This 177-nucleotide RNA was probed chemically with DMS and 2A3.

RNA sequence: GGGAACGACUCGAGUAGAGUCGAAAAAAGAAGAAGCGAUUUCUUUGCAUGUUCCGGGUCAUAAAAAUAUGACUAUCGGUCAUUUAUCUCAAUUAUCAAUGACAAUGGAUAAAACUGAAAUACCUGGAACCUAGGAUAUCUUCGGAUAUCCUAGGUUAAAAGAAACAACAACAACAAC
Reactivity to DMS in 0.01 (KOAc 150mM, MgCl2 10mM, bicine 150mM(pH8.5), 24C), signal-to-noise 3, nucleotides 027 to 126: a050a050g010a040a070g010a070a050g000c160g000a140u010u000u000c000u000u000u000g020c100a070u010g010u000u000c000c010g020g000g000u000c040a020u010a030a090a120a080a130u020a010u010g010a020c010u000a120u060c100g020g000u000c020a010u010u030u000a050u000c080u040c150a050a060u010u030a040u020c070a090a050u010g010a080c230a100a060u000g000g000a040u000a000a020a060a060c150u000g000a040a040a050u060a070c030c010u000g000g000
Reactivity to 2A3 in 0.01 (KOAc 150mM, MgCl2 10mM, bicine 150mM(pH8.5), 24C), signal-to-noise 6, nucleotides 027 to 126: a000a000g130a030a010g040a050a020g090c080g100a120u020u030u030c000u030u010u100g060c050a040u070g010u060u020c000c000g010g010g010u030c040a020u080a030a140a110a130a050u160a090u080g050a020c010u050a080u150c060g020g000u010c000a010u020u040u060a070u000c090u020c070a080a130u220u120a090u110c050a060a080u090g030a050c030a070a090u130g050g010a020u050a050a100a040a040c040u080g060a090a020a040u110a070c010c010u030g010g050